[RMDB]
The record gives the reactivity of an RNA of 170 nucleotides to 2A3 and DMS. 2A3 adducts were read by reverse transcription with SuperScript II with manganese. The reactions ran in a buffer of 150 mM KOAc, 10 mM MgCl2 and 150 mM bicine (pH 8.5), at 24 C. High 2A3 reactivity points to a flexible backbone, as in loops and unpaired stretches. The 2A3 profile rests on 103,895 reads.

RNA sequence: GGGAACGACUCGAGUAGAGUCGAAAAUGAAGCUGCAGCAUGUCAUCUUGCUAAAGCCUUACAAACAUACAGCGAGACUGGUAGUGAUCUUCUUUACCAACCACCCAACUGUAGCAUAACCUCUGGCGCCCAGUGAACUUCGGUUCACUGAAAAGAAACAACAACAACAAC
Reactivity to 2A3 in 0.01 (KOAc 150mM, MgCl2 10mM, bicine 150mM(pH8.5), 24C), signal-to-noise 9, nucleotides 027 to 129: u160g030a030a010g000c020u020g000c030a010g000c010a030u040g060u120c030a110u060c070u040u040g000c020u040a080a030a030g010c000c010u070u110a060c070a030a160a000c020a040u210a030c030a020g020c010g040a030g020a070c030u040g050g020u040a030g050u040g120a100u030c040u110u010c000u020u130u020a050c020c010a040a030c020c020a040c010c010c000a020a050c030u040g020u060a010g010c020a030u060a080a050c000c010u020c020u030g020g010c010g040c020c010
Reactivity to DMS in 0.01 (KOAc 150mM, MgCl2 10mM, bicine 150mM(pH8.5), 24C), signal-to-noise 9, nucleotides 027 to 129: u060g040a090a080g030c010u020g000c220a050g020c070a070u000g040u040c110a100u010c060u020u000g000c040u000a070a160a040g000c040c040u010u010a090c200a060a080a080c100a080u060a050c080a010g000c040g040a060g020a060c110u030g000g030u030a040g020u040g030a070u010c090u060u010c070u000u010u000a040c050c010a050a100c060c040a080c010c040c030a040a100c030u040g000u000a050g000c050a030u030a070a080c060c000u000c030u010g020g030c070g020c040c050